This 177-nucleotide RNA was probed chemically with DMS and 2A3. The 2A3 profile rests on 841 reads.
RNA sequence: GGGAACGACUCGAGUAGAGUCGAAAAUAGAAAUAGGUGUUAUUCUCUGUGAUGUAGGAGAACUACAAAACCAAUGUUCUGCCUCACAAUAAGGCUUUUUAAUUUUUCUAGUGGCCUGCCUUACUCAGUCAACUGUUCAAUUCGUUGAACAGUUGACAAAAGAAACAACAACAACAAC
Reactivity to DMS in 0.01 (KOAc 150mM, MgCl2 10mM, bicine 150mM(pH8.5), 24C), signal-to-noise 2, nucleotides 027 to 126: u010a020g040a040a040a040u000a220g000g010u000g010u000u010a070u000u000c040u000c040u000g020u000g030a080u000g030u000a150g000g000a020g000a000a040c090u000a060c160a050a060a130a190c080c030a040a070u010g000u000u020c020u000g000c050c020u000c110a050c160a080a110u010a060a040g000g010c010u000u000u010u050u000a060a100u010u010u020u020u020c090u050a060g030u010g020g010c050c030u000g000c050c020u000u000a050c070u010c100a210
Reactivity to 2A3 in 0.01 (KOAc 150mM, MgCl2 10mM, bicine 150mM(pH8.5), 24C), signal-to-noise 1, nucleotides 027 to 126: u110a000g000a000a000a000u030a020g000g110u040g010u100u080a060u110u030c070u000c030u050g090u150g130a200u120g040u180a130g000g050a020g090a080a010c020u080a060c000a040a150a070a010c030c030a040a080u110g000u000u030c010u050g080c000c010u060c000a020c010a040a130u130a070a010g110g030c000u150u060u020u030u110a190a190u090u090u040u080u060c040u030a050g080u040g090g000c010c020u000g010c010c000u050u030a060c010u010c120a020